[RMDB]
RNA sequence: GGGAACGACUCGAGUAGAGUCGAAAACACUGACCCCUGUGGCCACUGCAGGCACCCAGCAACCUGAAUGUGUAUUCCAUCUGAUGGCAUAGGCCCAGAAAGAACUGUUCUAGCACAGUUCUUACUCGGUUGAGAAUGUGUUCGCACAUUCUCAACCAAAAGAAACAACAACAACAAC
Reactivity to 2A3 in 0.01 (KOAc 150mM, MgCl2 10mM, bicine 150mM(pH8.5), 24C), signal-to-noise 2, nucleotides 027 to 126: c040a030c090u120g180a120c000c000c000c050u060g040u110g100g020c030c040a090c060u070g000c030a070g000g000c030a030c010c020c000a010g010c030a000a080c000c010u020g080a070a040u070g080u040g010u110a080u130u080c010c010a090u060c020u100g020a120u060g010g000c010a020u050a150g100g020c000c020c000a000g110a040a030a000g000a000a000c000u010g020u130u100c180u220a040g060c120a000c000a000g030u000u000c000u000u000a040c060u090c110
Reactivity to DMS in 0.01 (KOAc 150mM, MgCl2 10mM, bicine 150mM(pH8.5), 24C), signal-to-noise 2, nucleotides 027 to 126: c100a090c100u000g000a160c050c030c020c100u010g010u010g020g050c040c020a060c080u000g010c030a070g000g000c110a070c040c030c000a110g000c070a080a040c040c050u000g010a060a080u000g030u010g030u000a070u000u010c030c040a130u010c060u000g010a120u020g000g000c030a140u000a100g020g000c020c000c010a060g010a050a010a010g010a020a000c010u010g000u000u000c090u000a210g000c160a020c000a000g000u000u000c000u000u000a050c130u000c110